[RMDB]
RNA sequence: GGGAACGACUCGAGUAGAGUCGAAAACAGCAAUUAUUCGUAAUUGCUGAAUCGCGGACCCAGCGCGGAAGGAGCGCGCAGGACUCCUUCGCCGCCUUUUAAUAAGCAGGUACUUCGGUACCUGCAAGUCUGCAGUAUUGUUCGCAAUACUGCAGACAAAAGAAACAACAACAACAAC
Reactivity to 2A3 in 0.01 (KOAc 150mM, MgCl2 10mM, bicine 150mM(pH8.5), 24C), signal-to-noise 4, nucleotides 027 to 126: c010a000g000c000a010a010u010u020a010u060u150c160g070u070a010a010u010u000g000c000u000g030a010a080u130c060g000c030g080g010a050c020c010c000a020g020c020g000c010g100g030a030a020g000g020a020g030c070g010c060g050c170a030g090g110a140c000u010c020c000u020u020c050g050c050c010g020c020c010u130u290u080u060a270a190u270a220a030g000c010a010g000g000u000a000c000u040u090c220g060g000u000a000c010c000u000g000c010a000a010
Reactivity to DMS in 0.01 (KOAc 150mM, MgCl2 10mM, bicine 150mM(pH8.5), 24C), signal-to-noise 2, nucleotides 027 to 126: c000a000g000c000a010a010u000u000a020u000u010c230g030u000a000a000u000u000g000c000u010g020a050a080u010c100g010c080g000g010a170c010c000c000a140g010c020g000c060g010g000a020a010g000g000a010g030c080g000c140g020c160a070g000g000a140c020u000c000c020u000u000c020g010c100c050g000c040c070u000u010u010u010a030a140u010a130a140g000c000a010g010g030u000a000c000u000u020c180g000g000u000a010c000c000u000g000c000a000a030
Chemical mapping of a 177-nucleotide RNA with 2A3 and DMS. The reactions ran in a buffer of 150 mM KOAc, 10 mM MgCl2 and 150 mM bicine (pH 8.5), at 24 C. High DMS reactivity at an A or C suggests that its Watson-Crick edge is free. Reactivities are given for positions 27 through 126. For DMS the reverse transcriptase was MarathonRT.